[RMDB]
RNA sequence: GGGAACGACUCGAGUAGAGUCGAAAAGAUAUGGACUGAGCUUUUGACGGGAUUAUGGUCGGAAACGACCAGAAUCCCGAUAAGCUCACAUGUCCUAAGUCAAAAGGUUUAUGUUCGCAUAAACCAAGAUAUCACUGCUGUUCGCAGCAGUGAUAUCAAAAGAAACAACAACAACAAC
Reactivity to 2A3 in 0.01 (KOAc 150mM, MgCl2 10mM, bicine 150mM(pH8.5), 24C), signal-to-noise 2, nucleotides 027 to 126: g020a020u050a030u130g010g010a000c030u040g010a020g060c020u140u090u170u230g300a240c140g000g020g000a010u040u040a020u110g000g000u010c020g000g000a050a040a040c000g000a010c000c010a000g000a000a000u000c010c000c000g010a000u010a000a000g000c000u000c000a020c000a030u100g000u000c010c000u030a120a030g080u040c020a000a040a060a190g030g000u000u010u000a010u000g020u020u100c300g000c120a020u000a020a000a000c000c020a000a000
Reactivity to DMS in 0.01 (KOAc 150mM, MgCl2 10mM, bicine 150mM(pH8.5), 24C), signal-to-noise 3, nucleotides 027 to 126: g000a050u010a260u000g000g010a020c000u000g010a000g010c000u000u000u000u000g020a210c120g010g010g010a020u020u010a060u000g000g020u000c000g000g000a060a090a160c020g010a020c000c000a000g000a030a020u010c010c000c000g000a010u000a000a020g000c010u000c010a050c300a080u000g000u010c000c000u010a050a150g010u010c040a060a090a120a090g000g000u000u000u000a000u010g010u000u020c210g000c000a000u000a000a010a010c000c000a080a030
This 177-nucleotide RNA was probed chemically with 2A3 and DMS. The RNA was probed in 150 mM KOAc, 10 mM MgCl2 and 150 mM bicine (pH 8.5) at 24 C. For 2A3, 5,160 sequencing reads were counted. It was measured as part of the RMDB library TTRDEL. For 2A3 the reverse transcriptase was SuperScript II with manganese. For DMS the reverse transcriptase was MarathonRT.